[RMDB]
RNA sequence: GGGAACGACUCGAGUAGAGUCGAAAACGCCGAGGGCCGGUGCCCGGCGUGCUAACCAUGCGUCUGCGGCCAAGGCCGAGCUCCGAGCGGCGUUAGCGCCCUCUGCGAAGCGCCCUGCGAUGCCCCACUUAGACAUUCCUUUCGAGGAAUGUCUAAGAAAAGAAACAACAACAACAAC
Reactivity to 2A3 in 0.01 (KOAc 150mM, MgCl2 10mM, bicine 150mM(pH8.5), 24C), signal-to-noise 8, nucleotides 027 to 126: c010g000c000c010g020a080g010g020g000c040c030g040g060u170g020c000c000c000g000g000c010g010u020g010c020u040a060a060c040c020a070u140g000c010g040u060c070u140g070c120g060g000c020c030a100a080g090g000c000c010g010a030g010c020u030c050c040g040a060g050c050g020g000c020g040u050u050a050g030c010g020c050c020c010u030c040u050g020c010g080a110a010g020c000g020c020c000c010u020g020c040g030a040u090g010c010c000c000c000a040
Reactivity to DMS in 0.01 (KOAc 150mM, MgCl2 10mM, bicine 150mM(pH8.5), 24C), signal-to-noise 5, nucleotides 027 to 126: c010g020c020c050g010a100g010g010g010c010c040g000g040u020g010c020c000c020g000g000c000g010u000g010c050u020a070a120c220c190a250u020g000c020g000u000c020u020g030c080g000g010c030c110a120a100g010g000c020c010g010a120g000c010u010c050c050g000a070g020c040g000g020c020g010u000u010a050g000c050g000c030c010c020u010c040u010g010c020g000a110a100g000c070g010c000c000c010u020g010c020g000a090u020g010c000c010c000c070a270

Record summary:
Structure probing data (2A3 and DMS) for a 177-nucleotide construct. Conditions: 150 mM KOAc, 10 mM MgCl2 and 150 mM bicine (pH 8.5), 24 C. Values cover nucleotides 27 to 126.